[RMDB]
RNA sequence: GGGAACGACUCGAGUAGAGUCGAAAAUACGUCAGCGAUCGUUGCUGGACAGAACCUUGAUUCAGGUAAACGAGGGUAUGAGUAUCCUGCCGGAGGAUGCCCGCAACUAUGCGCGGCCCGUGCAGGCCUGAGUUGGUAUCUUCGGAUACCAACUCAGAAAAGAAACAACAACAACAAC
Reactivity to DMS in 0.01 (KOAc 150mM, MgCl2 10mM, bicine 150mM(pH8.5), 24C), signal-to-noise 3, nucleotides 027 to 126: u010a030c040g000u000c000a060g010c020g020a230u000c090g010u000u000g010c000u010g020g010a020c040a060g000a160a120c200c150u020u000g020a200u000u000c030a040g000g030u000a050a050a030c030g010a040g020g010g010u000a030u010g000a300g000u000a020u000c030c010u000g000c000c030g010g000a120g000g020a210u010g000c010c000c010g000c000a040a110c270u010a080u000g000c010g020c100g040g000c020c000c000g000u000g010c020a020g000g010c220
Reactivity to 2A3 in 0.01 (KOAc 150mM, MgCl2 10mM, bicine 150mM(pH8.5), 24C), signal-to-noise 3, nucleotides 027 to 126: u070a000c040g060u020c040a000g000c040g080a090u090c030g020u030u070g000c000u000g000g010a000c020a010g140a170a150c040c000u190u070g070a290u130u060c050a040g180g060u150a100a110a050c010g000a010g050g070g010u120a150u090g070a050g020u010a020u020c010c010u010g000c000c010g020g010a030g100g060a040u170g010c000c020c020g020c010a080a120c130u110a180u300g040c030g010c080g000g010c000c000c030g020u090g000c010a010g000g000c000